An RNA of 177 nucleotides, treated with DMS and 2A3 and read out base by base.
Reactivities are given for positions 27 through 126.
The DMS profile rests on 6,047 reads.
It was measured as part of the RMDB library OK2TST.
High DMS reactivity at an A or C suggests that its Watson-Crick edge is free.
The 2A3 profile rests on 5,257 reads.
2A3 adducts were read by reverse transcription with SuperScript II with manganese.
The RNA was probed in 150 mM KOAc, 10 mM MgCl2 and 150 mM bicine (pH 8.5) at 24 C.
RNA sequence: GGGAACGACUCGAGUAGAGUCGAAAAGAACGAACUGGCCGACGCUGGCCGGUUUGAAGACAUCACCCGCCGCAUCAACGGCGGUACUCACGGCCAGCCGCAGCGCCUGGCGCUCUGGCGUGCGGGGCCUUCCGAACUAGUUCGCUAGUUCGGAAGGAAAAGAAACAACAACAACAAC
Reactivity to DMS in 0.01 (KOAc 150mM, MgCl2 10mM, bicine 150mM(pH8.5), 24C), signal-to-noise 6, nucleotides 027 to 126: g010a130a140c030g010a030a040c030u000g000g000c000c010g010a160c270g010c150u010g030g020c000c000g000g000u000u000u010g010a110a080g010a150c190a110u010c100a150c210c010c000g020c000c000g000c060a090u010c270a160a160c110g000g000c010g010g010u000a010c080u010c100a060c090g000g000c000c010a090g000c210c040g010c090a060g000c030g000c020c030u010g020g000c080g010c080u000c050u010g000g010c020g010u000g010c030g010g000g000g010
Reactivity to 2A3 in 0.01 (KOAc 150mM, MgCl2 10mM, bicine 150mM(pH8.5), 24C), signal-to-noise 4, nucleotides 027 to 126: g030a060a020c020g010a020a020c020u030g020g000c030c020g100a170c160g130c280u120g010g010c000c000g010g000u000u000u000g000a010a000g090a000c050a100u110c050a080c030c010c000g020c010c000g020c060a300u130c040a110a060c010g020g000c020g000g000u030a040c040u050c030a060c040g080g000c020c010a040g010c050c010g000c020a020g050c020g020c020c060u040g080g000c030g000c040u060c040u060g040g000c010g010u050g010c020g000g010g020g020